[RMDB]
RNA sequence: GGGAACGACUCGAGUAGAGUCGAAAACUGCUUAAUUAAUUAAGUAGCCGUUCCAGCCACUGAGCCUGCGCGGUGGUGAGUGAACGUCAUUUUGCAGGAUAGGCCAAGAGCUUCGGUCCGGAGCUGGCGGCUGAGACUCAAUCGGGCUAAGCUGCCACUCCUACUGACUGUUCGCAGUCAGUAGGAGAAAAGAAACAACAACAACAAC
Reactivity to 2A3 in 0.01 (KOAc 150mM, MgCl2 10mM, bicine 150mM(pH8.5), 24C), signal-to-noise 2, nucleotides 027 to 156: c000u000g000c000u020u000a060a080u140u160a110a220u110u030a180a090g000u040a000g120c080c010g010u000u000c000c010a020g000c000c010a010c000u000g000a010g000c000c030u010g020c050g000c000g000g000u020g010g020u030g020a060g050u300g010a050a040c010g160u040c130a060u060u210u160u260g010c000a000g000g000a000u030a000g000g000c020c000a060a030g010a000g050c000u020u040c020g060g060u030c050c070g000g000a000g000c000u000g020g000c010g030g000c000u000g010a000g000a000c050u040c190a070a180u140c070g020g010g000c010u010a080a080g060c080u090g050c050c010a050
Structure probing data (2A3) for a 207-nucleotide construct. Conditions: 150 mM KOAc, 10 mM MgCl2 and 150 mM bicine (pH 8.5), 24 C. The 2A3 profile rests on 921 reads.